[RMDB]
RNA sequence: GGGAACGACUCGAGUAGAGUCGAAAAGUGCUUCCUUGAUCCUCAGUGGGUUGGUAUCACACUGUCUGGGUUACAGGCAUCCUCUUGAUGUGGAAUUUGGAAGCAUGGACCAAGAGAGGGUGCUCUACAGUACCUACGCAUUCGUGCGUAGGUACUGAAAAGAAACAACAACAACAAC
Reactivity to DMS in 0.01 (KOAc 150mM, MgCl2 10mM, bicine 150mM(pH8.5), 24C), signal-to-noise 3, nucleotides 027 to 126: g010u000g000c010u000u010c010c020u010u010g000a040u000c000c010u010c040a010g020u000g010g020g000u010u000g030g010u020a090u000c040a080c000a030c020u000g000u010c170u010g010g020g010u000u010a070c170a070g010g010c000a010u010c000c040u000c020u010u000g010a300u000g020u010g010g000a090a110u000u010u000g000g000a040a030g020c010a020u000g010g000a300c010c020a070a130g010a010g000a020g010g000g010u000g000c010u000c150u000a140
Reactivity to 2A3 in 0.01 (KOAc 150mM, MgCl2 10mM, bicine 150mM(pH8.5), 24C), signal-to-noise 3, nucleotides 027 to 126: g000u010g010c000u020u000c010c000u000u090g020a010u010c020c020u030c030a000g010u030g010g120g000u120u180g190g090u200a100u150c030a010c000a000c100u010g050u070c090u060g020g000g020u030u060a120c060a060g020g010c000a010u010c010c000u010c010u040u070g130a180u130g100u180g110g160a130a120u150u080u080g010g000a000a000g000c000a000u010g020g010a040c040c000a030a030g040a000g010a010g040g000g000u000g040c010u030c020u050a050
An RNA of 177 nucleotides, treated with DMS and 2A3 and read out base by base. Conditions: 150 mM KOAc, 10 mM MgCl2 and 150 mM bicine (pH 8.5), 24 C. Reactivities are rounded to 0.1 and cut off at 0 and 3. Values cover nucleotides 27 to 126. The data come from the RNA Mapping Database (RMDB), library OK2TST.